[RMDB]
RNA sequence: GGGAACGACUCGAGUAGAGUCGAAAAGUGGCAUACUUCGGUAUGCCACAAACCAGACCCUAUCUGGAACACGCUCUACUGCGAGAUCCCAAGUAGAUCCCAAAAGUCGUGGGUUCGCCCACGACAAGAAUCGUGCUAUGUUCGCAUAGCACGAUUCAAAAGAAACAACAACAACAAC
Reactivity to 2A3 in 0.01 (KOAc 150mM, MgCl2 10mM, bicine 150mM(pH8.5), 24C), signal-to-noise 2, nucleotides 027 to 126: g000u000g000g000c010a000u020a010c020u030u050c170g050g000u000a000u000g000c000c000a010c000a010a000a000c010c000a000g030a020c090c030c070u120a130u080c010u000g030g010a060a050c060a000c070g010c000u000c000u010a010c000u080g280c000g000a000g010a080u020c000c000c000a000a010g020u030a010g020a080u050c040c010c000a030a100a030a050g010u010c010g000u000g000g050g000u010u030c190g070c030c000c000a000c000g000a000c000a000a000
Reactivity to DMS in 0.01 (KOAc 150mM, MgCl2 10mM, bicine 150mM(pH8.5), 24C), signal-to-noise 1, nucleotides 027 to 126: g050u020g010g000c010a000u000a000c010u000u000c140g000g020u000a000u000g000c020c000a000c020a000a040a090c010c010a020g010a060c290c150c180u000a120u000c020u000g000g000a150a190c160a130c170g010c010u020c010u000a010c020u000g000c000g000a020g010a060u010c020c000c000a150a100g000u010a050g000a120u000c010c020c020a110a060a030a120g000u000c000g050u000g010g000g000u000u000c290g010c010c000c000a010c000g000a000c000a020a110
Structure probing data (2A3 and DMS) for a 177-nucleotide construct. Source: RMDB library M2PK50, as collected in RNAgym. 2A3 adducts were read by reverse transcription with SuperScript II with manganese. Conditions: 150 mM KOAc, 10 mM MgCl2 and 150 mM bicine (pH 8.5), 24 C.